[RMDB]
RNA sequence: GGGAACGACUCGAGUAGAGUCGAAAAGGUAAACAGUGAGGGAAUUGAGCAAAAGAGGCAGAUAUGAAAUGACAGACUGAAGAUUUUGCUGCCACUCCCAGAAUGAGAGUAUACAUUUCCAGGUGUAACAGUUACGACUAUUCGUAGUCGUAACUGUAAAAGAAACAACAACAACAAC
Reactivity to DMS in 0.01 (KOAc 150mM, MgCl2 10mM, bicine 150mM(pH8.5), 24C), signal-to-noise 5, nucleotides 027 to 126: g000g020u000a040a090a060c080a100g000u010g000a290g030g000g020a030a050u000u000g010a140g020c020a020a010a030a030g010a230g010g010c010a000g000a100u010a110u010g000a110a140a100u010g010a120c100a060g010a100c040u000g000a020a040g000a300u000u000u000u010g010c010u000g000c170c120a080c120u000c010c020c000a120g020a130a060u010g000a080g010a060g000u010a070u000a050c050a040u010u000u000c040c030a120g000g020u000g010u000a090
Reactivity to 2A3 in 0.01 (KOAc 150mM, MgCl2 10mM, bicine 150mM(pH8.5), 24C), signal-to-noise 2, nucleotides 027 to 126: g120g020u050a080a050a010c050a080g080u040g080a130g000g010g030a050a050u050u170g000a100g020c050a020a020a010a020g050a040g070g060c010a000g000a020u190a070u200g090a090a140a130u220g060a060c020a040g060a030c020u040g000a040a000g010a090u010u020u000u110g020c000u040g050c030c000a030c010u010c030c000c010a040g170a030a000u140g040a050g000a010g010u080a060u000a140c050a010u020u000u020c020c000a040g160g010u140g000u050a020